[RMDB]
RNA sequence: GGGAACGACUCGAGUAGAGUCGAAAAGAUAUGGACGAUGUCAGGGAGCUCUGACAUCGGAAACGAUGUCGAGCAUCGAUCUGAAUCGUCCUAAGUCAAAAGUUUGGGCAGUUCGCUGCCCAAACAAGUACCGUAUUAGGUUCGCCUAAUACGGUACAAAAGAAACAACAACAACAAC
Reactivity to 2A3 in 0.01 (KOAc 150mM, MgCl2 10mM, bicine 150mM(pH8.5), 24C), signal-to-noise 3, nucleotides 027 to 126: g000a010u020a010u070g000g000a010c020g000a010u050g260u300c010a010g020g050g120a200g010c020u020c150u300g100a020c000a000u000c000g000g000a000a000a000c010g010a000u010g000u000c010g020a000g020c030a080u280c110g120a200u000c010u010g000a010a010u000c010g000u000c000c000u000a000a000g000u000c010a000a000a060a300g000u000u000u000g000g000g000c000a030g010u070u160c260g070c110u000g000c000c000c000a000a010a000c000a000a010
Reactivity to DMS in 0.01 (KOAc 150mM, MgCl2 10mM, bicine 150mM(pH8.5), 24C), signal-to-noise 4, nucleotides 027 to 126: g010a020u010a130u010g010g010a020c000g000a010u000g010u000c000a000g010g020g010a180g040c020u000c010u020g030a000c000a000u000c000g030g000a010a030a080c000g020a020u000g020u000c000g000a020g020c000a190u000c280g000a110u010c010u000g000a060a030u000c000g010u000c000c000u010a000a080g000u010c020a120a100a100a100g020u000u000u000g000g000g010c010a010g010u000u020c300g020c000u000g010c000c000c000a000a000a000c010a070a130